[RMDB]
Background:
An RNA of 207 nucleotides, treated with DMS and 2A3 and read out base by base. For DMS, 7,429 sequencing reads were counted. The RNA was probed in 150 mM KOAc, 10 mM MgCl2 and 150 mM bicine (pH 8.5) at 24 C.
RNA sequence: GGGAACGACUCGAGUAGAGUCGAAAAAGAGGUAAUGAUGUUAUCUUUGUCCUUAAGACUAUAGGUGUCCCAUCAGCAUGUAGACAAAAUGAAGAUCCAAGAUUCGUAGAAGCAUUUAAAUGCGACGAGUUAGAAAGAUAUAUUGAUAAUAAUCCAGUCUAGCUAAUAACUUCGGUUAUUAGCUAGAAAAAGAAACAACAACAACAAC
Reactivity to DMS in 0.01 (KOAc 150mM, MgCl2 10mM, bicine 150mM(pH8.5), 24C), signal-to-noise 4, nucleotides 027 to 156: a120g000a060g020g020u000a040a050u000g030a140u000g010u000u010a040u000c010u000u010u000g020u000c040c030u000u010a120a140g010a130c050u000a140u010a120g010g020u000g000u020c010c030c030a100u000c050a270g020c060a050u000g020u000a090g030a110c080a040a050a080a110u000g010a090a150g010a100u000c020c020a050a220g000a050u000u000c030g020u000a050g020a100a120g010c010a030u000u000u000a080a090a090u020g000c010g000a050c010g000a040g010u000u000a070g000a090a090a070g000a050u010a100u000a060u000u000g000a080u010a040a080u000a070a140u010c020c020a110g010
Reactivity to 2A3 in 0.01 (KOAc 150mM, MgCl2 10mM, bicine 150mM(pH8.5), 24C), signal-to-noise 4, nucleotides 027 to 156: a000g050a010g030g010u070a050a080u080g110a030u120g050u080u010a110u040c000u030u080u050g050u090c000c000u040u080a070a050g030a050c040u070a080u110a210g030g020u040g020u020c040c000c000a050u060c010a010g040c000a000u100g060u110a020g030a060c040a030a060a010a070u160g030a050a080g020a060u040c040c000a030a040g030a030u050u020c010g010u040a020g010a180a010g000c010a000u100u240u190a140a220a000u020g000c010g010a010c020g010a000g020u000u030a030g090a090a130a000g050a020u150a030u030a020u140u060g030a020u040a180a050u080a060a020u070c030c030a020g130